[RMDB]
RNA sequence: GGGAACGACUCGAGUAGAGUCGAAAAGAAACAGAGUUUGACAUCCUAAUUGCCUGUUAGAAUCAUUUGGGAGUUUUUAAGGACACAAAGAUCUGAGACCAUUUAAAUCAGAGUCUCUGGAGUUAGGGCACUGGUGCUGGUAGAUUUUAAAAACUCACCCUCCAUAAUAUUUCGAUAUUAUGGAGGGAAAAGAAACAACAACAACAAC
Reactivity to 2A3 in 0.01 (KOAc 150mM, MgCl2 10mM, bicine 150mM(pH8.5), 24C), signal-to-noise 2, nucleotides 027 to 156: g060a010a050a000c020a040g040a020g080u070u100u110g040a010c000a040u050c020c020u030a030a030u140u060g030c020c000u090g030u040u060a020g050a160a030u090c040a130u070u110u100g040g020g000a030g010u000u000u000u070u220a060a030g020g010a020c010a000c030a110a050a080g010a020u030c010u080g040a020g020a050c010c020a000u100u190u210a060a260a010u080c020a020g050a020g080u050c020u000c030u100g040g020a030g050u100u140a040g040g020g010c010a000c050u030g000g050u110g000c010u000g010g070u040a040g010a020u080u100u130u160a050a100a000a000a000c040u030c040a100
Reactivity to DMS in 0.01 (KOAc 150mM, MgCl2 10mM, bicine 150mM(pH8.5), 24C), signal-to-noise 1, nucleotides 027 to 156: g010a200a080a160c070a090g030a170g030u000u000u000g010a120c050a090u000c030c030u000a100a030u000u000g000c000c010u010g050u000u010a070g010a090a130u000c030a130u010u000u010g050g010g000a150g050u000u000u030u000u010a080a130g030g010a120c030a060c080a040a070a080g000a090u010c030u000g000a050g070a070c070c090a140u010u030u010a030a120a190u000c040a100g000a150g030u000c010u000c030u000g030g010a110g030u000u000a070g020g010g040c050a050c050u000g030g030u000g000c040u000g030g010u000a080g000a200u000u020u020u010a090a050a070a030a060c030u000c040a260

Source: RMDB library OK3TST, as collected in RNAgym. An RNA of 207 nucleotides, treated with 2A3 and DMS and read out base by base. 2A3 adducts were read by reverse transcription with SuperScript II with manganese. High 2A3 reactivity points to a flexible backbone, as in loops and unpaired stretches. For DMS the reverse transcriptase was MarathonRT. For 2A3, 716 sequencing reads were counted. The reactions ran in a buffer of 150 mM KOAc, 10 mM MgCl2 and 150 mM bicine (pH 8.5), at 24 C. For DMS, 1,398 sequencing reads were counted. Values are in units of 0.01, from 0 to 300, in steps of 10.